This 170-nucleotide RNA was probed chemically with 2A3 and DMS. The reactions ran in a buffer of 150 mM KOAc, 10 mM MgCl2 and 150 mM bicine (pH 8.5), at 24 C. Source: RMDB library 15KLIB, as collected in RNAgym. Values are in units of 0.01, from 0 to 300, in steps of 10. The 2A3 profile rests on 15,003 reads.

RNA sequence: GGGAACGACUCGAGUAGAGUCGAAAAUUAUGCUGUGUCUAGUGCCUUCUGGUUAUUCACCCACAUUCCAAUGGCGGGUUUGGUACGAAUGUAUAAUUUGUUAGCAUGCCUUUGGCUUUUACGCAAGAUAGAGCACAGUUCGCUGUGCUCAAAAGAAACAACAACAACAAC
Reactivity to 2A3 in 0.01 (KOAc 150mM, MgCl2 10mM, bicine 150mM(pH8.5), 24C), signal-to-noise 7, nucleotides 027 to 129: u090u030a050u130g020c010u020g040u000g030u110c040u060a080g030u000g050c030c000u060u070c070u080g080g000u070u070a070u130u100c020a070c010c010c020a000c020a070u100u090c060c010a040a080u030g030g000c000g040g010g000u070u040u060g050g020u060a010c030g030a070a020u040g080u060a070u020a170a060u010u020u040g060u030u010a030g030c040a030u050g020c000c000u070u040u080g020g000c000u060u030u060u090a070c090g000c040a000a080g010a100u140a020
Reactivity to DMS in 0.01 (KOAc 150mM, MgCl2 10mM, bicine 150mM(pH8.5), 24C), signal-to-noise 4, nucleotides 027 to 129: u010u000a080u060g000c010u000g040u030g000u000c000u020a070g040u040g020c050c040u030u010c100u020g000g020u010u010a070u010u000c090a060c030c020c010a070c130a080u070u040c060c130a090a080u040g010g020c090g060g040g000u100u000u000g010g030u000a020c080g020a000a000u000g020u040a000u040a030a010u000u000u000g010u000u000a080g050c040a040u020g030c000c000u050u010u040g010g010c120u000u000u000u000a090c160g030c080a070a050g030a130u000a040